Structure probing data (DMS and 2A3) for a 177-nucleotide construct. For DMS, 3,454 sequencing reads were counted. For 2A3, 3,046 sequencing reads were counted. The RNA was probed in 150 mM KOAc, 10 mM MgCl2 and 150 mM bicine (pH 8.5) at 24 C. For DMS the reverse transcriptase was MarathonRT.
RNA sequence: GGGAACGACUCGAGUAGAGUCGAAAACACAUGCCAUCAUAUCGGUUAAGAACUCUUAACUCUGAUGGCUUUCGAGUUAUGUGGUGCAUUGAAGCUCUCCCUUGAAUUCAACGUACCGUUCCGUCAAUCAUACUUGGCAGUUCGCUGCCAAGUAUGAAAAAGAAACAACAACAACAAC
Reactivity to DMS in 0.01 (KOAc 150mM, MgCl2 10mM, bicine 150mM(pH8.5), 24C), signal-to-noise 4, nucleotides 027 to 126: c130a100c180a090u020g010c000c000a000u000c000a060u010a160u020c230g010g000u000u000a000a020g000a260a190c300u010c010u000u000a000a010c000u010c100u010g000a010u000g000g000c010u000u010u000c040g000a030g010u000u010a060u010g010u000g000g020u000g020c020a050u010u000g000a040a020g010c070u000c030u000c060c070c030u000u000g000a070a110u000u000c020a020a010c050g020u000a010c000c010g030u000u000c000c010g000u000c090a050a130
Reactivity to 2A3 in 0.01 (KOAc 150mM, MgCl2 10mM, bicine 150mM(pH8.5), 24C), signal-to-noise 2, nucleotides 027 to 126: c060a010c010a070u130g000c010c010a000u020c000a000u110a090u250c050g020g000u000u000a020a050g040a270a280c070u080c000u300u000a000a000c000u000c010u040g000a000u010g000g000c020u000u040u000c010g000a010g010u040u050a120u210g170u150g030g000u010g000c020a020u040u000g020a040a030g010c030u000c040u040c090c060c000u000u120g080a090a060u030u030c020a040a020c020g020u030a010c010c000g000u000u000c030c000g120u080c060a000a110